[RMDB]
RNA sequence: GGGAACGACUCGAGUAGAGUCGAAAAACAGUCUCCGCGAGUGGGACAUGGAUAAGAUUGUCCCGGCGUACAACCGUCGAGUCAAUGGCGACAUUGCUAUCAUGGCUGGGACCGGGAAGACCACGAAACCAAAGAGGGAGUUCGCUCCCUCUUUGGUAAAAGAAACAACAACAACAAC
Reactivity to DMS in 0.01 (KOAc 150mM, MgCl2 10mM, bicine 150mM(pH8.5), 24C), signal-to-noise 4, nucleotides 027 to 126: a050c110a060g000u000c020u010c010c020g000c190g020a080g060u030g020g020g000a040c030a040u020g020g000a090u010a080a110g000a070u020u040g010u000c020c010c000g000g000c030g000u050a250c090a050a060c040c010g010u010c120g000a050g020u000c010a020a010u000g000g000c210g030a230c040a020u010u000g000c040u020a140u010c100a060u000g000g000c020u000g000g000g000a240c000c000g000g000g000a060a090g030a130c040c030a110c120g000a090a160
Reactivity to 2A3 in 0.01 (KOAc 150mM, MgCl2 10mM, bicine 150mM(pH8.5), 24C), signal-to-noise 4, nucleotides 027 to 126: a000c020a000g020u010c030u010c020c020g040c140g110a110g070u300g000g000g000a000c040a080u020g080g030a110u130a260a080g040a150u120u070g020u010c000c000c000g000g000c040g030u170a070c030a060a020c060c050g030u040c070g030a010g060u210c040a030a040u070g010g020c020g020a060c020a070u010u120g000c010u020a050u250c010a140u180g040g000c000u010g020g040g140a060c000c010g010g000g000a040a070g020a030c000c040a040c100g020a120a070